[RMDB]
RNA sequence: GGGAACGACUCGAGUAGAGUCGAAAAACGCUUCACAAUGUGCGGCAAAGAAACAUUGUUUAUGCAAAGGCACUUCGCAAUGUAUGCUCAAACAUUGCUUAUUCAAACACGCUUCACAAUGUGCGACAAAACUUCACGGUCUUCGGACCGUGAAGAACAUUUAAAGGUGGUUCGCCACCUUUAAAUGAAAAGAAACAACAACAACAAC
Reactivity to DMS in 0.01 (KOAc 150mM, MgCl2 10mM, bicine 150mM(pH8.5), 24C), signal-to-noise 4, nucleotides 027 to 156: a040c020g020c020u000u000c050a040c020a010a050u000g040u000g030c020g010g040c030a120a120a090g030a050a030a010c010a030u000u010g030u000u020u000a080u010g010c020a050a160a100g000g000c020a040c050u000u010c130g030c070a100a050u010g020u010a070u010g010c050u000c050a090a150a030c020a040u000u000g000c000u010u000a070u000u000c070a100a120a080c050a080c050g020c080u010u000c130a080c120a060a090u010g020u000g010c030g010a200c090a050a050a070a070c000u000u000c000a020c000g000g000u000c000u000u000c300g040g010a030c010c000g040u000g010a000a000g000a060a090
Reactivity to 2A3 in 0.01 (KOAc 150mM, MgCl2 10mM, bicine 150mM(pH8.5), 24C), signal-to-noise 9, nucleotides 027 to 156: a000c010g000c010u010u010c010a000c000a020a030u010g000u010g000c000g070g020c080a100a100a080g100a030a080a000c010a010u010u000g080u050u100u090a080u100g040c040a040a050a070g100g000c020a020c080u090u080c110g000c010a020a010u010g010u030a050u150g050c030u060c120a070a090a010c000a010u010u010g010c020u070u080a120u110u140c060a030a080a040c070a020c090g060c030u100u110c070a040c040a140a110u130g030u030g040c010g060a040c060a010a110a050a050c000u000u000c000a000c000g000g000u000c000u020u070c100g070g000a000c000c000g000u000g000a000a000g000a000a000
Source: RMDB library M2RFPK, as collected in RNAgym.
This 207-nucleotide RNA was probed chemically with DMS and 2A3.
Values cover nucleotides 27 to 156.
For DMS the reverse transcriptase was MarathonRT.
2A3 adducts were read by reverse transcription with SuperScript II with manganese.
For 2A3, 12,255 sequencing reads were counted.
The RNA was probed in 150 mM KOAc, 10 mM MgCl2 and 150 mM bicine (pH 8.5) at 24 C.